[RMDB]
RNA sequence: GGGAACGACUCGAGUAGAGUCGAAAACCGAGGUCGCGAGACCUCGGACACUCCGAGAGGAGUGAAACUGGCCAAGUGCAAUCUCGGCGAAUGAAGCCGGCCAGCGGACGGUAGCACAUGCGAGGGAUCGCUAGCUACCGACCGAAGAGAUGCACAAACCCAUAGGAUAGUUCGCUAUCCUAUGGGUAAAAGAAACAACAACAACAAC
Reactivity to 2A3 in 0.01 (KOAc 150mM, MgCl2 10mM, bicine 150mM(pH8.5), 24C), signal-to-noise 5, nucleotides 027 to 156: c000c000g000a000g000g010u010c010g000c050g030a030g000a050c000c000u000c000g000g000a000c000a000c000u000c000c000g040a040g010a020g050g000a000g010u020g060a120a100a010c010u000g010g000c000c010a110a070g010u000g000c010a120a160u010c000u000c010g000g000c020g040a130a210u240g050a110a000g000c000c000g000g000c000c000a000g000c000g000g010a010c000g000g000u000a000g000c010a050c060a300u150g000c020g010a020g030g100g030a090u010c010g000c010u020a020g000c000u000a010c000c000g000a010c000c000g000a020a010g000a000g000a000u000g000c000a000c000a000a070
Reactivity to DMS in 0.01 (KOAc 150mM, MgCl2 10mM, bicine 150mM(pH8.5), 24C), signal-to-noise 2, nucleotides 027 to 156: c040c000g040a070g000g060u020c000g020c270g000a300g000a020c000c020u010c020g020g040a150c000a020c000u000c000c000g000a300g010a300g020g020a040g040u010g000a000a070a090c040u020g000g050c050c000a100a140g010u000g020c010a010a110u000c000u010c010g030g000c010g000a140a160u000g010a180a210g040c000c000g040g030c010c010a080g020c060g000g020a170c000g010g010u000a030g000c040a100c090a200u020g000c010g020a030g010g010g000a240u010c000g040c000u010a120g000c000u020a000c020c010g000a050c010c010g020a050a070g010a030g010a110u000g000c000a080c000a110a300
An RNA of 207 nucleotides, treated with 2A3 and DMS and read out base by base. It was measured as part of the RMDB library OK3TST. The RNA was probed in 150 mM KOAc, 10 mM MgCl2 and 150 mM bicine (pH 8.5) at 24 C. DMS adducts were read by reverse transcription with MarathonRT. For 2A3, 6,647 sequencing reads were counted. Reactivities are given for positions 27 through 156.